[RMDB]
RNA sequence: GGGAACGACUCGAGUAGAGUCGAAAAAUGAUGGGACUUAUGGCUUCAAUAGAAGAGGAAGAGAGACCAGAGCUACAUGCAUGAUCUCACCCUCUCACCAUGUGAUGCCCUUUGCCACAUCAUGAUGCAGCAAGAAGGUCCUCACCAGAUGCCACAAAGUGAUAUUACCGUUCGCGGUAAUAUCACUAAAAGAAACAACAACAACAAC
Reactivity to 2A3 in 0.01 (KOAc 150mM, MgCl2 10mM, bicine 150mM(pH8.5), 24C), signal-to-noise 7, nucleotides 027 to 156: a000u040g010a020u010g010g000g060a160c010u050u020a040u120g010g000c010u030u020c030a020a100u050a110g180a210a010g010a050g040g020a080a110g170a030g010a000g000a070c040c010a020g010a080g080c030u160a160c130a160u300g000c000a020u010g010a040u010c000u000c000a070c010c020c000u000c010u010c010a120c050c050a110u260g050u030g080a010u040g000c000c000c000u020u020u040g030c040c010a210c000a050u030c010a010u040g040a040u100g030c070a050g000c030a060a100g050a060a030g100g030u020c010c020u030c020a020c020c000a020g050a090u080g060c010c040a070c040a080a130
Reactivity to DMS in 0.01 (KOAc 150mM, MgCl2 10mM, bicine 150mM(pH8.5), 24C), signal-to-noise 2, nucleotides 027 to 156: a070u010g020a040u000g000g000g030a040c020u010u000a080u000g050g010c000u000u000c030a060a100u000a130g010a080a060g020a060g010g020a070a110g030a270g000a030g020a040c010c020a050g000a170g080c020u000a060c160a080u020g070c020a140u000g010a030u000c010u000c010a200c060c000c000u010c000u020c020a080c040c020a070u010g040u000g000a050u000g020c080c010c150u010u010u000g030c000c090a040c020a000u000c010a070u010g000a110u010g020c060a050g000c040a070a040g020a110a120g010g000u010c060c030u000c030a050c060c020a090g020a150u000g010c000c040a030c090a030a170